Structure probing data (DMS) for a 177-nucleotide construct. The DMS profile rests on 1,760 reads. The RNA was probed in 150 mM KOAc, 10 mM MgCl2 and 150 mM bicine (pH 8.5) at 24 C. Reactivities are given for positions 27 through 126.
[RMDB]
RNA sequence: GGGAACGACUCGAGUAGAGUCGAAAAUUGAGCUGUCGGCUGGUUAAUGAUUUCAUUUUUUAAAUACGCUCCCACUAUCAAUCCAAUAAUGGGUUGAUGCUGAACCAUUGCUGGCUAGUGUGUUUAAAUUUGAUCCAUCUUUCGAGAUGGAUCAAAUAAAAGAAACAACAACAACAAC
Reactivity to DMS in 0.01 (KOAc 150mM, MgCl2 10mM, bicine 150mM(pH8.5), 24C), signal-to-noise 2, nucleotides 027 to 126: u010u000g010a140g010c080u010g020u000c040g010g040c030u010g030g000u000u000a060a050u010g000a090u000u000u000c050a030u000u010u010u000u000u030a030a060a140u000a140c070g000c040u000c070c010c000a130c200u000a020u000c000a000a020u000c000c010a060a230u020a130a120u010g010g010g000u000u000g010a000u000g010c250u000g000a030a010c050c040a040u010u000g000c020u000g010g010c050u000a030g000u000g010u000g000u000u000u000a050a060